Source: RMDB library ARCHII, as collected in RNAgym. Structure probing data (2A3 and DMS) for a 207-nucleotide construct. 2A3 is a SHAPE reagent: it acylates the 2'-hydroxyl of flexible nucleotides of all four kinds. For DMS the reverse transcriptase was MarathonRT.
[RMDB]
RNA sequence: GGGAACGACUCGAGUAGAGUCGAAAACAAGGAGCGAGUUUAAAGGCUAGUCAGCUCAGCUGGCAACACCGUCAAAUUGCGGGAACAUCCUAAGAGCUAUCGACCACCAAGCAGGCUGCUGAAAGGCGUCUGUGGCCGGAUUAACGACUCCGGGUAACACUUUCUGUUACUUCGGUAACAGAAAGUGAAAAGAAACAACAACAACAAC
Reactivity to 2A3 in 0.01 (KOAc 150mM, MgCl2 10mM, bicine 150mM(pH8.5), 24C), signal-to-noise 4, nucleotides 027 to 156: c010a020a080g040g030a000g000c100g020a060g110u070u070u130a040a030a010g030g000c020u000a030g010u010c010a000g020c030u030c150a070g030c130u080g000g020c010a050a040c030a070c090c000g020u070c040a040a170a300u240u260g010c010g010g000g020a030a030c040a090u130c020c000u030a070a010g010a010g020c020u060a040u180c080g030a030c010c020a020c050c040a040a020g000c010a000g020g000c010u140g000c000u010g150a030a040a030g050g000c000g010u010c000u010g020u050g000g010c020c000g010g010a080u110u040a030a030c030g070a070c020u000c000c000g020g000g010u040a060a000
Reactivity to DMS in 0.01 (KOAc 150mM, MgCl2 10mM, bicine 150mM(pH8.5), 24C), signal-to-noise 2, nucleotides 027 to 156: c020a140a090g010g000a070g000c070g010a100g010u010u000u000a070a060a120g000g000c000u010a300g030u010c000a060g100c000u010c050a170g010c050u000g040g030c050a050a140c170a080c040c000g010u000c070a060a050a120u000u000g000c000g010g010g000a070a120c060a120u010c000c030u010a090a150g010a020g050c010u010a080u000c050g020a080c030c020a110c020c100a080a240g030c040a050g020g000c010u010g060c030u010g010a120a060a140g020g020c030g000u000c030u000g060u000g030g010c040c010g080g010a100u000u010a060a130c030g020a080c050u000c010c000g000g000g010u010a060a140
The RNA was probed in 150 mM KOAc, 10 mM MgCl2 and 150 mM bicine (pH 8.5) at 24 C.